An RNA of 170 nucleotides, treated with 2A3 and DMS and read out base by base. Source: RMDB library 15KLIB, as collected in RNAgym. The DMS profile rests on 11,144 reads. Values cover nucleotides 27 to 129. Values are in units of 0.01, from 0 to 300, in steps of 10.
RNA sequence: GGGAACGACUCGAGUAGAGUCGAAAAAAGAGGCAUUCUAUAGAGAUCUCUAUAGUUCGCCUACCACUUUGCAGGCUGUCGGUUCAUGCGUUGUAUGCCAUUCACAGACUUCCCUACGCUGUGGGACAAGGGCAUUUCUUCGGAAAUGCCAAAAGAAACAACAACAACAAC
Reactivity to 2A3 in 0.01 (KOAc 150mM, MgCl2 10mM, bicine 150mM(pH8.5), 24C), signal-to-noise 4, nucleotides 027 to 129: a000a000g130a000g000g000c010a010u020u010c050u000a000u000a000g050a090g070a240u170c090u000c000u190a000u000a000g020u010u070c090g000c000c010u010a050c020c010a050c030u090u110u140g070c050a010g030g000c000u000g010u010c000g050g000u020u000c010a030u060g060c050g060u100u180g120u140a080u130g010c010c000a000u010u080c040a040c010a040g070a040c010u010u000c010c000c000u000a000c050g010c000u020g000u010g010g000g010a010c040a080a010g020
Reactivity to DMS in 0.01 (KOAc 150mM, MgCl2 10mM, bicine 150mM(pH8.5), 24C), signal-to-noise 3, nucleotides 027 to 129: a090a010g000a070g040g000c010a020u030u000c000u020a030u020a040g010a000g010a090u110c210u050c000u020a060u030a060g000u000u000c100g010c010c030u020a090c020c010a120c000u000u000u100g020c000a000g000g000c030u040g010u000c050g060g010u080u000c030a020u030g020c160g020u040u040g030u040a000u040g030c010c000a060u070u010c000a040c050a080g010a110c070u030u060c060c060c000u050a000c140g030c010u000g010u010g000g000g000a000c130a070a120g030